[RMDB]
RNA sequence: GGGAACGACUCGAGUAGAGUCGAAAAGGAGGACCUGUUGGAGCAUUUGUCGCUACACUUUUUGCUGUAGAGGUUGGAAAAUUAGUUUCAAAAGAAACAAAAAUAGAUAUAUUGGUUACACCUGCUGAUUAAUUUUAUCGUUCGCGAUAAAAUUAAUAAAAGAAACAACAACAACAAC
Reactivity to DMS in 0.01 (KOAc 150mM, MgCl2 10mM, bicine 150mM(pH8.5), 24C), signal-to-noise 4, nucleotides 027 to 126: g010g010a140g010g010a050c030c020u010g000u030u010g020g020a120g020c030a050u000u030u030g010u010c050g010c040u000a050c070a070c050u010u010u010u010u020g000c120u000g020u000a050g000a110g010g020u000u000g000g000a050a040a080a100u030u020a110g010u000u000u000c010a090a070a080a160g000a080a030a020c010a020a050a070a040a070u040a100g010a070u030a090u030a120u010u010g000g010u030u020a080c070a070c040c010u000g020c080u020g000
Reactivity to 2A3 in 0.01 (KOAc 150mM, MgCl2 10mM, bicine 150mM(pH8.5), 24C), signal-to-noise 3, nucleotides 027 to 126: g050g010a020g010g020a050c040c010u080g050u100u100g110g020a030g030c030a050u020u080u150g050u000c020g000c020u050a020c000a040c050u060u120u100u200u210g050c060u000g020u040a050g030a050g030g030u060u070g100g010a040a070a030a060u120u040a050g010u040u000u000c040a150a190a070a070g000a020a030a020c020a040a190a000a060a000u070a010g040a030u120a010u030a080u140u140g050g000u050u040a000c020a040c030c020u040g070c020u030g090